[RMDB]
RNA sequence: GGGAACGACUCGAGUAGAGUCGAAAACGACCGUCGCCAAUGUGUUCCAUCGUCCUUCCACUGUGACGGAACCAACGAUUGUCACGAUGGUUCUGACGAGGUCGGAUGCGUGCAGCCAACCGUCGUAGCAGCCAUAAAUCUUCGGAUUUAUGGCUGCAAAAGAAACAACAACAACAAC
Reactivity to 2A3 in 0.01 (KOAc 150mM, MgCl2 10mM, bicine 150mM(pH8.5), 24C), signal-to-noise 2, nucleotides 027 to 126: c010g010a010c010c050g070u060c020g040c010c010a030a080u130g040u020g020u110u000c020c020a020u010c050g010u010c000c020u050u000c050c010a140c140u140g110u220g110a020c000g000g020a030a030c030c010a010a050c040g060a090u090u130g040u090c030a010c040g000a040u020g020g000u010u090c030u090g030a000c020g070a030g030g070u010c040g020g000a020u090g040c090g050u080g000c020a000g000c000c000a030a020c010c030g010u020c020g040u070a040
Reactivity to DMS in 0.01 (KOAc 150mM, MgCl2 10mM, bicine 150mM(pH8.5), 24C), signal-to-noise 1, nucleotides 027 to 126: c050g000a000c020c040g000u000c040g000c030c040a040a140u010g000u010g000u000u000c040c010a050u000c020g000u000c020c100u000u000c040c010a120c100u020g000u030g010a080c090g000g000a040a040c080c160a060a080c050g010a080u010u000g010u000c120a040c000g030a090u020g000g000u000u010c060u010g030a070c000g000a130g020g020u000c070g010g000a070u000g030c090g020u010g020c110a080g000c040c040a030a060c020c030g030u000c090g040u000a130